[RMDB]
The data come from the RNA Mapping Database (RMDB), library OK3TST. This 207-nucleotide RNA was probed chemically with 2A3. For 2A3 the reverse transcriptase was SuperScript II with manganese. Values cover nucleotides 27 to 156.
RNA sequence: GGGAACGACUCGAGUAGAGUCGAAAACUGGACCCUUCUGAACUCUUGGAUUAUGCUGGGGACCCAAAAUUUGCUGGCUUUUUGUCUGAGCAUCUUCAGACUUGCACUAAAGUAGGAUUAUUUCACUUAACAUAUCUCUUAAGGAGGAGGAUGCUGACUAUGAGCUUUUAUUCGUAAAAGCUCAUAGAAAAGAAACAACAACAACAAC
Reactivity to 2A3 in 0.01 (KOAc 150mM, MgCl2 10mM, bicine 150mM(pH8.5), 24C), signal-to-noise 2, nucleotides 027 to 156: c000u020g000g090a050c020c010c000u040u000c050u050g070a120a100c010u040c050u100u120g030g030a030u120u080a050u300g030c020u090g060g030g000g030a070c020c000c000a030a090a030a060u020u100u110g050c000u000g000g140c090u040u100u080u160u190g030u030c020u010g020a020g020c030a100u010c030u110u010c030a040g010a110c000u050u060g040c020a050c050u040a010a010a120g040u040a070g090g040a050u030u060a090u040u300u090c050a050c070u070u090a120a010c000a020u140a140u050c100u010c000u070u110a100a040g030g020a010g000g040a000g000g010a010u080g050c050u050g040a050